The data come from the RNA Mapping Database (RMDB), library RNAMAK. The record gives the reactivity of an RNA of 207 nucleotides to 2A3 and DMS. Conditions: 150 mM KOAc, 10 mM MgCl2 and 150 mM bicine (pH 8.5), 24 C.

[RMDB]
RNA sequence: GGGAACGACUCGAGUAGAGUCGAAAACUGGCCCUUCGGGGCCAGAAAAAGAUAUGGAACAUCAUCAUGCGGCUGGACCGACGAAGUCGGAAACGACAGAGGUCCAGAACUACCGUGCACGGUGUUCCUAAGUCAAAAAGGGGGAUUCGUCCCCCAAUCAUCUAUCAGGAUUCGUCCUGAUAGAUGAAAAAGAAACAACAACAACAAC
Reactivity to 2A3 in 0.01 (KOAc 150mM, MgCl2 10mM, bicine 150mM(pH8.5), 24C), signal-to-noise 2, nucleotides 027 to 156: c000u000g000g000c000c030c000u020u040c300g040g000g010g030c010c000a000g000a000a020a010a000a000g020a010u060a020u110g000g000a000a000c000a010u020c000a010u000c030a060u190g010c010g020g000c000u000g000g000a000c000c010g120a200c090g070a220a030g020u000c010g000g050a100a030a040c000g000a000c020a030g050a020g030g010u000c000c000a000g000a000a020c000u070a020c010c010g000u020g020c050a020c100g010g000u000g000u000u000c000c000u000a000a010g000u000c030a000a010a100a040a070g000g010g000g000g010a000u050u060c090g060u040c050c000c010c000c010a000a110
Reactivity to DMS in 0.01 (KOAc 150mM, MgCl2 10mM, bicine 150mM(pH8.5), 24C), signal-to-noise 1, nucleotides 027 to 156: c000u000g050g060c000c000c030u010u000c260g110g040g010g000c000c010a000g000a030a010a070a190a060g000a140u000a300u000g000g010a020a010c000a010u010c030a040u000c040a080u000g020c050g010g040c000u000g000g000a030c050c000g010a300c170g000a140a180g010u050c000g000g010a160a110a300c010g000a010c020a130g000a300g070g030u000c030c010a070g000a040a100c090u000a130c020c040g020u010g010c160a070c090g050g000u000g020u000u020c010c010u010a030a080g020u000c030a020a080a080a130a130g030g000g010g000g010a130u000u010c040g050u000c000c000c000c000c010a000a000
The DMS profile rests on 2,110 reads.